[RMDB]
RNA sequence: GGGAACGACUCGAGUAGAGUCGAAAAAUGACUAAUGAGAAUUAGACAUACUUGGGCCUGUCAUUUGGAAUGGACUCAUGACACUAAGAAUGGAUCAUCUUGGAACAGGUUCCCACAACAAGUGUCACGUGCAUUUCACGUUCGCGUGAAAUGCACGAAAAGAAACAACAACAACAAC
Reactivity to DMS in 0.01 (KOAc 150mM, MgCl2 10mM, bicine 150mM(pH8.5), 24C), signal-to-noise 1, nucleotides 027 to 126: a010u000g000a180c030u000a000a040u010g000a180g010a160a050u010u000a050g010a110c000a030u000a060c060u020u010g000g010g010c040c030u000g010u000c030a110u000u020u000g000g000a130a070u000g030g000a030c050u000c030a070u000g010a130c090a030c040u020a050a080g010a080a080u000g030g010a060u010c110a120u000c110u010u010g000g010a060a040c090a070g000g010u010u000c000c010c030a090c130a030a060c160a050a060g000u010g080u000c020a100
Reactivity to 2A3 in 0.01 (KOAc 150mM, MgCl2 10mM, bicine 150mM(pH8.5), 24C), signal-to-noise 1, nucleotides 027 to 126: a000u040g010a040c040u040a000a000u030g030a040g100a100a060u040u020a050g000a010c010a000u130a040c040u080u050g040g030g000c040c030u050g000u060c010a030u040u070u150g090g100a120a050u140g010g030a050c010u000c050a020u040g010a010c000a000c070u080a080a070g050a060a030u120g000g040a020u090c020a000u010c050u070u030g040g010a050a000c000a040g000g040u060u080c020c060c010a070c010a080a070c000a000a020g040u040g010u010c010a010